The record gives the reactivity of an RNA of 177 nucleotides to DMS and 2A3. Reactivities are given for positions 27 through 126. For DMS the reverse transcriptase was MarathonRT. High 2A3 reactivity points to a flexible backbone, as in loops and unpaired stretches. The 2A3 profile rests on 1,296 reads. Source: RMDB library RFM100, as collected in RNAgym.
RNA sequence: GGGAACGACUCGAGUAGAGUCGAAAAGAAAGAGGGCAGUGACGAAAAAUUUGCGCUAAAAUGUGAUGACUGGGUCUCAUCACCAUCGUCUGAUCUUUCGGACGAGAACUCGCGCAUCCGAGCUCAAACCGAAAAGCACAUUCGUGUGCUUUUCGGUAAAAGAAACAACAACAACAAC
Reactivity to DMS in 0.01 (KOAc 150mM, MgCl2 10mM, bicine 150mM(pH8.5), 24C), signal-to-noise 2, nucleotides 027 to 126: g000a100a050a040g000a050g000g000g020c070a110g100u040g000a020c180g010a020a090a020a220a070u030u020u000g000c000g000c040u040a060a040a080a170u020g000u000g020a010u040g010a050c140u080g000g000g000u130c120u000c020a040u000c010a000c020c300a050u010c000g000u020c000u030g000a080u040c300u010u030u000c000g000g020a010c040g020a020g040a110a120c300u000c140g000c000g000c000a060u000c150c000g000a020g000c030u010c100a000a050
Reactivity to 2A3 in 0.01 (KOAc 150mM, MgCl2 10mM, bicine 150mM(pH8.5), 24C), signal-to-noise 3, nucleotides 027 to 126: g090a030a050a000g100a070g040g030g000c000a020g050u060g190a040c090g090a000a010a020a050a110u060u070u100g020c010g010c010u040a080a100a000a050u130g010u000g010a000u020g000a030c060u110g030g160g150u090c030u000c060a000u020c000a000c000c010a040u010c000g010u000c000u000g070a080u060c140u050u190u110c080g010g000a000c010g000a010g020a020a020c040u030c060g000c000g010c000a000u050c000c030g030a030g040c000u050c030a120a100